[RMDB]
RNA sequence: GGGAACGACUCGAGUAGAGUCGAAAAGUGCAUACAAGUGUUUGACGUGUUUGACGUCUUGUGUUGUCAAUCACUCUUAAGACUCACGCGGGAAUGGAUCAUCUUGUGACUUUUGUGAGUGUUUAUUUGGAUCAUCAGCGACACAAUCGUCCAAAUCCCCAUCGCACGAUUUCGAUCGUGCGAUGGGAAAAGAAACAACAACAACAAC
Reactivity to 2A3 in 0.01 (KOAc 150mM, MgCl2 10mM, bicine 150mM(pH8.5), 24C), signal-to-noise 1, nucleotides 027 to 156: g020u030g060c050a080u120a180c070a130a100g030u010g030u030u060u070g200a060c000g000u120g120u130u040u090g040a000c010g030u030c050u040u090g000u000g030u010u000g060u050c010a000a050u020c030a050c130u000c010u040u090a080a000g000a080c000u010c000a030c070g070c010g000g000g080a050a060u090g080g080a060u090c020a050u000c040u040u140g030u050g110a110c000u000u090u100u190g010u050g050a070g010u090g100u060u050u090a200u050u090u050g080g000a060u150c050a000u030c070a050g200c000g010a000c000a000c000a120a010u000c000g060u050c000c000a010a020a040u030c030
This 207-nucleotide RNA was probed chemically with 2A3.
The 2A3 profile rests on 446 reads.
2A3 adducts were read by reverse transcription with SuperScript II with manganese.
Reactivities are given for positions 27 through 156.